About this RNA
An RNA of 177 nucleotides, treated with DMS and read out base by base. The RNA was probed in 150 mM KOAc, 10 mM MgCl2 and 150 mM bicine (pH 8.5) at 24 C.
[RMDB]
RNA sequence: GGGAACGACUCGAGUAGAGUCGAAAAGAUAUGGAGGGAGCGAUGAACAGGCACUAUCAUCGGAAACGAUGAUAAACCUGUCAUCGCGAAGAACUCCUAAGUCAAAACUGGCACUUCGGUGCCAGAACAUUUGGUCACUCUUCGGAGUGACCAAAUGAAAAGAAACAACAACAACAAC
Reactivity to DMS in 0.01 (KOAc 150mM, MgCl2 10mM, bicine 150mM(pH8.5), 24C), signal-to-noise 1, nucleotides 027 to 126: g030a030u000a300u000g000g000a030g030g010g020a130g000c000g000a010u020g000a080a030c010a000g000g020c080a160c230u000a020u000c000a000u000c000g000g000a100a130a210c000g010a010u010g000a020u000a060a130a130c000c000u000g000u000c000a000u000c000g020c020g000a030a080g010a180a220c010u010c000c000u010a010a140g000u000c040a050a060a160a180c000u010g000g000c000a040c020u010u020c230g040g010u000g010c000c010a000g010a050a150
Annotation:
For DMS the reverse transcriptase was MarathonRT. Values cover nucleotides 27 to 126.